The record gives the reactivity of an RNA of 177 nucleotides to 2A3 and DMS. The RNA was probed in 150 mM KOAc, 10 mM MgCl2 and 150 mM bicine (pH 8.5) at 24 C.

RNA sequence: GGGAACGACUCGAGUAGAGUCGAAAACGGUUUUGGCUACGAGGGGUAGUAGCGGGCUGCAGCUUGUGCUUGUUUAUGUAUCCGCUGGCCUGGCUUGUUUGUUGCUGCUCGCAGCUGUUCCAGAUCGACGCCAUAUUAUAUUCGUAUAAUAUGGCGUAAAAGAAACAACAACAACAAC
Reactivity to 2A3 in 0.01 (KOAc 150mM, MgCl2 10mM, bicine 150mM(pH8.5), 24C), signal-to-noise 9, nucleotides 027 to 126: c020g010g020u020u040u150u110g050g000c020u040a030c100g050a080g000g040g020g000u020a020g020u010a020g020c000g000g010g010c020u120g020c020a060g040c030u130u150g040u050g070c010u060u050g070u200u190u050a120u120g110u050a060u040c030c020g010c060u020g010g010c000c000u010g030g010c010u090u180g060u130u070u070g130u040u110g010c010u010g010c000u000c010g030c020a020g000c010u030g020u030u020c010c010a030g030a140u190c080g020
Reactivity to DMS in 0.01 (KOAc 150mM, MgCl2 10mM, bicine 150mM(pH8.5), 24C), signal-to-noise 9, nucleotides 027 to 126: c040g010g000u000u010u020u010g010g010c020u010a040c110g020a130g010g010g010g020u010a050g010u010a050g010c020g000g010g010c020u020g030c060a080g010c130u020u020g030u020g010c030u000u010g000u010u020u010a050u030g010u010a050u010c030c040g000c030u000g000g000c020c020u010g000g010c020u000u030g020u000u000u010g010u020u030g000c010u000g000c010u000c010g010c140a100g020c020u000g000u000u000c010c000a100g010a120u020c120g010